RNA sequence: GGGAACGACUCGAGUAGAGUCGAAAAGAACGAGUUCAGCCCAUUUCGUAGAUCCAUUCCUCGGCUGAACUCGUAGGCGUUGUGAACGAGGAAGGAAUGGAUCUACGAAAUGUUCACAACGCCAAGACUACUCGGAACUAUUCGUAGUUUCGAGUAGAAAAGAAACAACAACAACAAC
Reactivity to 2A3 in 0.01 (KOAc 150mM, MgCl2 10mM, bicine 150mM(pH8.5), 24C), signal-to-noise 5, nucleotides 027 to 126: g050a010a000c000g000a000g000u000u000c000a000g000c010c030c020a010u010u010u010c000g000u000a010g010a160u050c030c020a080u040u040c000c000u000c000g000g000c000u000g000a000a000c000u000c000g000u010a060g000g000c000g000u000u000g000u000g000a000a000c010g000a000g000g020a020a020g030g120a030a020u100g110g050a100u010c010u000a000c000g000a000a000a010u020g000u000u000c000a000c000a000a000c000g000c000c000a010a000g010a010
Reactivity to DMS in 0.01 (KOAc 150mM, MgCl2 10mM, bicine 150mM(pH8.5), 24C), signal-to-noise 9, nucleotides 027 to 126: g010a160a030c010g000a020g010u000u000c010a020g010c020c020c080a030u000u000u000c010g010u000a030g010a130u000c050c030a110u000u000c010c000u000c040g000g000c010u000g000a020a020c000u000c000g010u000a020g020g010c010g000u000u000g010u000g000a010a020c010g020a020g010g010a090a050g010g010a100a150u000g010g010a080u000c040u000a010c000g000a000a010a010u000g010u000u000c010a010c020a010a010c000g020c000c000a020a030g000a220